This 207-nucleotide RNA was probed chemically with DMS. For DMS, 2,043 sequencing reads were counted. Conditions: 150 mM KOAc, 10 mM MgCl2 and 150 mM bicine (pH 8.5), 24 C. Values are in units of 0.01, from 0 to 300, in steps of 10.

RNA sequence: GGGAACGACUCGAGUAGAGUCGAAAAGAAGCCAGGAAAUGUCAUUCCCAGUGGUCUCCUCCCUGCCCUCCACUCCUAUGCUCUGUAGGAGAGGGAAGAGAGCUUGAAGCAGACCAGCAGACGACGGCCCCAUUUCCUAAAUGCAGGGGCUUCCACAGAUACGUGGCAUAUUCGUAUGCCACGUAUCAAAAGAAACAACAACAACAAC
Reactivity to DMS in 0.01 (KOAc 150mM, MgCl2 10mM, bicine 150mM(pH8.5), 24C), signal-to-noise 1, nucleotides 027 to 156: g010a100a090g060c020c040a090g020g010a070a080a060u000g020u000c050a120u000u000c010c010c030a250g010u000g040g000u010c000u000c050c000u000c000c000c010u000g000c010c020c010u010c000c220a230c030u020c000c010u000a010u000g010c150u000c090u020g000u000a040g060g000a040g040a070g030g000g010a040a070g000a050g000a020g020c090u000u000g010a060a070g000c060a050g000a050c020c010a110g020c050a150g010a070c140g000a130c050g030g010c000c010c030c030a130u010u000u030c040c050u000a040a130a130u020g000c090a080g010g010g070g000c020u000u020c000c040a120c170a300